[RMDB]
RNA sequence: GGGAACGACUCGAGUAGAGUCGAAAACACACUGGGAUCCAGAUACAAAGAUUGUGCUGCCCUCACAGCUUUGAGUUACAUUACUCAAUUGACCAGCAUCAAAAUUCACGAACUGCUGCUGUGGAUCAGCUGGCGACGAAUUCGUUCGUCGCCAGCUAAAAGAAACAACAACAACAAC
Reactivity to 2A3 in 0.01 (KOAc 150mM, MgCl2 10mM, bicine 150mM(pH8.5), 24C), signal-to-noise 1, nucleotides 027 to 126: c030a010c000a010c080u000g000g000g220a020u000c000c000a000g000a080u190a150c000a000a100a000g020a300u070u050g090u120g000c000u000g000c000c000c000u000c000a140c030a030g000c020u000u040u010g000a000g000u000u050a060c010a150u220u140a060c020u000c000a000a070u190u010g070a150c010c000a010g020c000a000u070c070a050a000a210a210u050u100c000a010c290g210a150a070c050u050g000c000u010g000c000u070g000u070g000g000a120u200c000